[RMDB]
RNA sequence: GGGAACGACUCGAGUAGAGUCGAAAAGGCCUCCCUUUCGAGGGAGGCCCUGCGGUCCUAAGUCUGGUAGUACGCCCACCAGACAUGUCGGAAACGACAACAGCUGGUGUGAGCGUAGCCAGAUAUGGAAUUUAUGCUCCCUCUUCGGAGGGAGCAACCCUAAUAACAAGUUCGCUUGUUAUUAGGGAAAAGAAACAACAACAACAAC
Reactivity to DMS in 0.01 (KOAc 150mM, MgCl2 10mM, bicine 150mM(pH8.5), 24C), signal-to-noise 2, nucleotides 027 to 156: g030g030c030c000u020c010c010c010u000u000u010c160g010a050g040g010g000a030g050g010c000c020c010u000g010c050g000g000u000c020c000u000a100a290g000u000c000u000g010g010u000a090g040u000a020c010g060c030c010c020a060c000c000a090g000a050c070a090u010g010u000c000g010g000a290a170a300c020g000a010c000a040a110c110a160g000c010u010g020g030u000g000u030g020a100g050c000g030u000a070g000c000c010a030g010a030u000a090u000g000g010a080a040u000u010u000a110u030g010c000u000c010c000c000u000c010u000u010c300g030g000a030g000g010g000a000g000c010a000a000
Reactivity to 2A3 in 0.01 (KOAc 150mM, MgCl2 10mM, bicine 150mM(pH8.5), 24C), signal-to-noise 5, nucleotides 027 to 156: g010g000c000c000u020c000c000c000u040u030u050c240g140a010g000g000g010a000g000g020c000c020c000u000g010c020g100g080u020c000c000u040a130a030g030u000c000u000g020g020u050a180g220u010a050c000g020c010c010c000a000c000c000a000g010a150c010a030u030g000u010c000g010g040a090a080a160c020g010a000c010a040a020c060a070g060c000u000g000g000u020g040u090g050a130g010c010g000u000a000g000c000c000a000g000a000u010a010u020g020g110a050a020u300u160u050a160u240g010c000u010c000c040c000u000c000u010u060c240g130g010a000g000g000g010a000g000c000a000a000